Source: RMDB library OK2TST, as collected in RNAgym. This 177-nucleotide RNA was probed chemically with DMS and 2A3. DMS adducts were read by reverse transcription with MarathonRT. The 2A3 profile rests on 4,961 reads. 2A3 adducts were read by reverse transcription with SuperScript II with manganese. Conditions: 150 mM KOAc, 10 mM MgCl2 and 150 mM bicine (pH 8.5), 24 C.
RNA sequence: GGGAACGACUCGAGUAGAGUCGAAAAGGCGUACUUGGAUCAUAAUAGGGAGUCAGAAUAACCAAAGCGAUAGUAUUCUCUACAUCGACAAUCACAUUUGCGCCCACCGCAAAGCCAAGCCAAUCGCUCUUAUGUGUUACUUCGGUAACACAUAAGAAAAAGAAACAACAACAACAAC
Reactivity to DMS in 0.01 (KOAc 150mM, MgCl2 10mM, bicine 150mM(pH8.5), 24C), signal-to-noise 5, nucleotides 027 to 126: g000g030c020g030u000a020c030u000u010g000g000a070u010c090a100u010a140a170u010a070g010g010g010a080g020u020c110a120g030a060a050u000a080a130c110c070a060a110a130g000c100g000a040u000a100g010u000a040u000u000c040u000c050u000a040c090a070u000c110g010a070c140a060a040u010c070a090c040a050u000u000u000g000c040g010c010c010c020a160c090c050g000c080a030a060a100g000c040c040a030a090g020c060c080a070a080u000c080g010c100
Reactivity to 2A3 in 0.01 (KOAc 150mM, MgCl2 10mM, bicine 150mM(pH8.5), 24C), signal-to-noise 4, nucleotides 027 to 126: g000g000c010g010u040a030c030u010u040g030g030a040u070c010a080u090a300a080u060a150g030g030g020a030g030u030c030a040g100a090a050u110a130a030c040c030a120a080a010g050c030g010a010u030a060g080u070a070u080u010c040u000c030u030a030c030a100u080c050g050a040c070a060a040u090c040a040c020a220u030u040u050g000c020g030c000c000c010a040c000c030g000c030a090a040a000g030c020c030a020a010g030c020c030a030a080u060c050g010c060